[RMDB]
RNA sequence: GGGAACGACUCGAGUAGAGUCGAAAAUGGUGACUGAUCAUACCCGCCAGCUGGCUAAUAUCAUAAUUAACGAAGUUGGUGCGACGUCUGCAAAGUUUAAUCGGAACAUUUACCAGCGAUGUGAUGGCUAUGCAUCAGAGUUCGCUCUGAUGCAUAGAAAAGAAACAACAACAACAAC
Reactivity to 2A3 in 0.01 (KOAc 150mM, MgCl2 10mM, bicine 150mM(pH8.5), 24C), signal-to-noise 2, nucleotides 027 to 126: u100g060g040u060g010a150c050u040g060a030u070c030a020u060a120c000c000c010g000c000c000a050g020c020u020g000g000c040u040a030a040u090a080u130c080a070u050a300a100u170u030a040a040c080g040a080a000g010u030u030g060g000u020g000c000g000a030c050g030u020c030u080g030c020a040a110a100g020u050u110u180a090a080u110c020g020g000a030a020c010a040u050u050u010a050c030c000a000g000c020g040a040u070g040u040g060a030u070g020g020
Reactivity to DMS in 0.01 (KOAc 150mM, MgCl2 10mM, bicine 150mM(pH8.5), 24C), signal-to-noise 4, nucleotides 027 to 126: u010g010g020u010g030a090c060u020g010a110u000c060a100u000a170c050c040c050g020c040c020a040g020c010u000g000g010c040u000a030a030u010a060u000c210a080u010a100a070u000u000a030a070c070g000a060a080g040u010u000g000g000u000g010c080g020a120c100g010u000c050u000g020c060a090a070a080g010u000u000u020a050a080u010c040g000g000a140a060c050a030u000u010u010a150c030c020a080g010c070g010a070u010g000u000g010a160u010g000g010

Source: RMDB library RFMREP, as collected in RNAgym. Chemical mapping of a 177-nucleotide RNA with 2A3 and DMS. Reactivities are given for positions 27 through 126. For DMS, 2,713 sequencing reads were counted.